[RMDB]
RNA sequence: GGGAACGACUCGAGUAGAGUCGAAAAGACGCCUGUGUGGCGAAGCGAGCAAUGGUAUAAGCCGCAAUAGAAGAUGAGAUGGAAGCGGCAAGAUAGAAUGCUCGCAACGAGAUCCAUCUCACAGAGACCUCAUCGCAUAUUUCGAUAUGCGAUGAGGAAAAGAAACAACAACAACAAC
Reactivity to 2A3 in 0.01 (KOAc 150mM, MgCl2 10mM, bicine 150mM(pH8.5), 24C), signal-to-noise 2, nucleotides 027 to 126: g030a020c000g040c000c000u250g080u040g200u300g190g000c000g000a030a000g010c000g010a040g010c030a090a300u120g080g030u120a080u090a130a030g000c010c000g020c020a010a050u150a010g050a120a010g120a240u040g020a010g000a000u010g020g010a210a000g000c000g020g000c000a000a000g020a000u100a030g190a130a050u020g000c000u000c000g000c000a000a000c020g100a000g030a080u000c000c000a000u000c000u000c000a020c060a000g100a010g060a090
Reactivity to DMS in 0.01 (KOAc 150mM, MgCl2 10mM, bicine 150mM(pH8.5), 24C), signal-to-noise 1, nucleotides 027 to 126: g000a240c040g000c000c030u000g090u040g020u000g090g030c020g010a130a030g000c050g000a000g000c000a030a100u000g010g000u090a070u030a030a080g010c000c000g030c000a300a170u090a090g030a000a090g010a190u020g000a000g000a000u030g000g000a150a030g000c000g000g000c010a090a100g000a290u050a000g000a030a080u010g000c000u000c000g000c000a020a030c020g000a160g000a280u000c000c000a010u000c000u000c000a030c000a300g000a200g070a170
This 177-nucleotide RNA was probed chemically with 2A3 and DMS. Reactivities are rounded to 0.1 and cut off at 0 and 3. For DMS the reverse transcriptase was MarathonRT. The 2A3 profile rests on 1,857 reads. The RNA was probed in 150 mM KOAc, 10 mM MgCl2 and 150 mM bicine (pH 8.5) at 24 C. 2A3 adducts were read by reverse transcription with SuperScript II with manganese.